Chemical mapping of a 177-nucleotide RNA with DMS. It was measured as part of the RMDB library TTRINS. For DMS, 875 sequencing reads were counted.
RNA sequence: GGGAACGACUCGAGUAGAGUCGAAAAGAUAUGGAAGAUCUACAAGUCCAACAGCAUGUCUAAGCCUGUGCUCGGAAACGAGCACAGGCUUAGACAUGACAUGGACGAGUAGAGUCUUCCUAAGUCACAACAAACGUUAGUUCGCUAACGUUUGUUGAAAAGAAACAACAACAACAAC
Reactivity to DMS in 0.01 (KOAc 150mM, MgCl2 10mM, bicine 150mM(pH8.5), 24C), signal-to-noise 1, nucleotides 027 to 126: g000a110u000a300u010g010g000a010a000g020a300u000c000u010a000c000a030a300g030u010c000c030a050a150c270a210g000c010a000u000g000u010c010u000a030a000g030c000c000u000g040u010g000c000u010c000g050g010a070a100a210c000g000a020g080c000a010c000a020g000g030c010u000u000a000g000a010c000a000u000g000a020c080a140u000g000g030a010c000g000a300g000u010a010g000a050g000u000c000u000u000c000c000u030a000a080g020u000c040a270

The reactions ran in a buffer of 150 mM KOAc, 10 mM MgCl2 and 150 mM bicine (pH 8.5), at 24 C.